[RMDB]
Conditions: 150 mM KOAc, 10 mM MgCl2 and 150 mM bicine (pH 8.5), 24 C. This 177-nucleotide RNA was probed chemically with 2A3 and DMS. For 2A3 the reverse transcriptase was SuperScript II with manganese. Reactivities are given for positions 27 through 126. DMS adducts were read by reverse transcription with MarathonRT. The DMS profile rests on 6,298 reads.

RNA sequence: GGGAACGACUCGAGUAGAGUCGAAAAGAGGAUACGAAUAGCUUCGUGCUUUCGAUAGCUUAGUAGCGGCGGCUACGUGCCCUAGGGGAGCCGCCUCCCCUGCUAUCGGCGCGAGGGGAGUAUCCGAACUAGGUAUUAGCUUCGGCUAAUACCUAGUAAAAGAAACAACAACAACAAC
Reactivity to 2A3 in 0.01 (KOAc 150mM, MgCl2 10mM, bicine 150mM(pH8.5), 24C), signal-to-noise 4, nucleotides 027 to 126: g160a040g010g010a000u020a010c010g030a140a170u120a210g140c010u000u010c010g010u030g010c020u140u190u190c020g000a010u010a000g000c010u120u100a030g030u060a020g100c030g050g000c020g020g000c030u040a050c090g100u170g070c010c000c010u070a090g020g030g040g020a010g060c060c010g020c050c010u020c000c000c000c000u010g000c010u000a020u020c010g010g000c000g000c010g010a000g010g010g010g010a040g000u000a000u000c000c010g000a000
Reactivity to DMS in 0.01 (KOAc 150mM, MgCl2 10mM, bicine 150mM(pH8.5), 24C), signal-to-noise 4, nucleotides 027 to 126: g000a190g000g010a030u000a020c000g020a140a140u020a180g010c010u010u000c020g010u010g010c040u010u020u010c060g010a020u000a000g010c020u010u000a070g010u010a050g010c120g010g020c060g010g000c000u000a030c130g000u000g000c030c010c040u000a100g010g010g000g020a050g010c040c090g000c050c000u000c020c020c050c030u000g000c020u010a020u000c020g020g010c020g010c010g000a030g010g010g010g010a250g000u000a020u000c000c000g020a070